[RMDB]
RNA sequence: GGGAACGACUCGAGUAGAGUCGAAAAGCGUACUACGCACGCGACCAAUGCCAACAGCGAUAUAUUGGGUGAGUCCCAAAUAGGACUCACCAGGUAUCGACAUGGCAUUGCAAGCGUGCGUAUCGCAAACGGAUCGUUGCUUCGGCAACGAUCCGAAGCAUCUGUAUUCGUUCGCGAAUACAGAUGCAAAAGAAACAACAACAACAAC
Reactivity to 2A3 in 0.01 (KOAc 150mM, MgCl2 10mM, bicine 150mM(pH8.5), 24C), signal-to-noise 2, nucleotides 027 to 156: g000c000g020u080a060c080u000a020c030g000c000a000c030g010c150g000a040c000c010a010a000u000g000c000c020a120a060c140a300g000c000g040a000u000a000u010a080u110u280g210g000g000u020g000a000g000u000c040c030c090a180a220a140u300a160g000g000a010c000u000c000a000c000c000a000g000g000u020a000u000c060g160a300c190a120u040g000g040c000a000u020u020g020c040a090a000g000c000g000u070g010c000g000u000a000u000c000g060c000a120a000a000c030g000g000a000u000c000g000u000u000g000c030u020u090c210g110g000c000a000a000c000g000a000u000c000c000g020a000a000
Record summary:
This 207-nucleotide RNA was probed chemically with 2A3. Source: RMDB library RNAMAK, as collected in RNAgym. 2A3 is a SHAPE reagent: it acylates the 2'-hydroxyl of flexible nucleotides of all four kinds.